[RMDB]
RNA sequence: GGGAACGACUCGAGUAGAGUCGAAAAUUGUCUUGACUGGGGACGGGAUCCUCUUUAGACUCUUGUACCCCUAAAUUUGGCGGGGCUUGUGCCCUGUCAUUUGCUUUUCUUGUAAGACAAUAGCGUCUCUUUAUUGCUUUUUCGAAAGCAAUAAAGAAAAAGAAACAACAACAACAAC
Reactivity to 2A3 in 0.01 (KOAc 150mM, MgCl2 10mM, bicine 150mM(pH8.5), 24C), signal-to-noise 9, nucleotides 027 to 126: u010u000g000u000c000u030u070g100a100c100u060g000g000g000g000a000c010g020g030g010a040u050c010c030u120c020u100u070u150a040g010a030c050u000c000u020u030g030u280a300c000c000c000c010u040a090a090a040u020u010u010g000g000c010g000g010g000g030c030u140u290g140u300g080c010c000c000u000g000u000c000a000u000u010u020g010c010u080u120u110u080c070u070u160g050u100a020a000g000a000c010a010a040u040a060g090c050g110u010c010
Reactivity to DMS in 0.01 (KOAc 150mM, MgCl2 10mM, bicine 150mM(pH8.5), 24C), signal-to-noise 8, nucleotides 027 to 126: u010u000g000u000c010u000u010g010a100c220u010g000g010g000g000a070c020g010g000g010a100u000c060c110u010c240u000u020u020a080g010a060c120u000c010u000u000g000u000a140c020c000c000c030u000a040a060a030u010u000u010g010g000c010g010g010g000g010c000u010u030g010u030g000c000c000c000u000g000u000c000a010u000u010u000g010c150u010u020u010u020c150u020u020g010u020a040a010g000a010c010a020a020u000a080g010c150g000u020c060